This 177-nucleotide RNA was probed chemically with DMS and 2A3.
DMS adducts were read by reverse transcription with MarathonRT.
Source: RMDB library OK2TST, as collected in RNAgym.
The reactions ran in a buffer of 150 mM KOAc, 10 mM MgCl2 and 150 mM bicine (pH 8.5), at 24 C.
RNA sequence: GGGAACGACUCGAGUAGAGUCGAAAACAGCAGACCGCUCGUGCGAUGCCAGACAAAAUUGCCGUGGUCGAUAAUCAUGGUGCAUCGUACACCUAUAGCGCGCUCGAUCACGCCGCGAGCUGUCUGAGAGUACGUAGCAUUUCGAUGCUACGUACUCAAAAGAAACAACAACAACAAC
Reactivity to DMS in 0.01 (KOAc 150mM, MgCl2 10mM, bicine 150mM(pH8.5), 24C), signal-to-noise 3, nucleotides 027 to 126: c080a180g000c000a030g000a020c010c110g000c000u010c010g040u000g030c210g020a080u000g010c070c170a110g040a150c100a050a070a090a130u000u000g040c090c030g050u010g010g000u000c010g000a060u000a060a120u010c100a120u010g020g020u000g000c010a060u020c210g030u000a090c000a030c050c030u000a080u000a040g000c070g000c120g010c070u000c000g010a030u000c010a010c020g000c080c040g030c000g030a030g010c010u000g020u000c000u010g000a110
Reactivity to 2A3 in 0.01 (KOAc 150mM, MgCl2 10mM, bicine 150mM(pH8.5), 24C), signal-to-noise 5, nucleotides 027 to 126: c010a020g040c010a000g000a020c000c010g010c020u010c020g020u020g040c120g050a100u130g070c070c040a050g060a230c120a060a240a070a110u160u140g020c030c010g000u000g000g020u010c030g000a050u140a130a090u140c090a050u100g030g010u030g020c040a160u120c140g070u120a070c010a020c030c010u080a110u130a140g100c120g000c020g020c040u010c000g010a010u020c000a010c000g020c040c010g000c010g000a000g000c000u010g000u010c010u000g020a030